[RMDB]
The record gives the reactivity of an RNA of 177 nucleotides to DMS and 2A3. It was measured as part of the RMDB library TTRINS. High DMS reactivity at an A or C suggests that its Watson-Crick edge is free. For DMS, 1,058 sequencing reads were counted. DMS adducts were read by reverse transcription with MarathonRT.
RNA sequence: GGGAACGACUCGAGUAGAGUCGAAAAGAUAUGGACGUCGAACUACUUGGACCGUUAGCUUGGAUUUAUUACAUUUCGGAAACGAAAUGUAAUUGUCAGCUAACUAGUACAAGCGACGUCCUAAGUCGCUUGACGUGGUCUUCGGACCACGUCAAGCAAAAGAAACAACAACAACAAC
Reactivity to DMS in 0.01 (KOAc 150mM, MgCl2 10mM, bicine 150mM(pH8.5), 24C), signal-to-noise 1, nucleotides 027 to 126: g000a120u010a300u000g010g010a010c010g030u010c000g000a070a050c050u010a300c020u000u010g010g000a120c200c180g010u000u000a000g000c000u000u000g020g020a060u020u000u010a010u010u000a000c000a000u000u000u000c000g010g020a060a100a300c000g000a010a000a010u010g000u000a000a020u000u000g000u020c000a060g000c000u000a010a020c000u000a090g020u010a190c000a000a000g000c020g000a020c000g000u000c000c020u000a010a060g000u020c030
Reactivity to 2A3 in 0.01 (KOAc 150mM, MgCl2 10mM, bicine 150mM(pH8.5), 24C), signal-to-noise 1, nucleotides 027 to 126: g090a090u140a100u180g030g000a000c010g000u010c020g000a130a130c070u190a040c000u300u030g000g000a020c040c010g010u030u000a010g010c020u040u250g300g000a090u300u300u090a060u000u070a010c000a000u020u000u010c000g030g030a010a120a070c000g000a040a000a000u000g000u000a010a000u010u010g020u000c000a020g000c000u000a000a000c010u020a030g050u010a000c000a010a000g000c030g010a000c010g010u010c000c000u000a010a010g020u020c070